Overview:
Structure probing data (DMS) for a 177-nucleotide construct.
[RMDB]
RNA sequence: GGGAACGACUCGAGUAGAGUCGAAAAGAUAUGGAUCAUUUCCAGUGUAAUAGGUCGGCUUCGAUAAGAAACAUUCGGAAACGAAUGAAUUUCUUUUGACGAAGCCGACCUAUAUUGAUCCUAAGUCCCUAUAUAUCAACUUCGGUUGAUAUAUAGGAAAAGAAACAACAACAACAAC
Reactivity to DMS in 0.01 (KOAc 150mM, MgCl2 10mM, bicine 150mM(pH8.5), 24C), signal-to-noise 6, nucleotides 027 to 126: g000a130u010a170u000g010g010a010u000c000a070u010u000u000c090c120a230g010u020g020u010a120a040u000a010g010g010u000c000g000g000c000u000u000c000g020a200u000a020a010g000a010a030a080c010a010u000u000c000g010g000a160a120a250c000g000a020a010u000g010a130a150u000u000u000c000u000u000u010u000g010a220c130g010a010a010g010c000c000g000a000c000c000u000a000u000a010u000u000g010a020u000c000c000u000a100a160g000u010c080
The reactions ran in a buffer of 150 mM KOAc, 10 mM MgCl2 and 150 mM bicine (pH 8.5), at 24 C.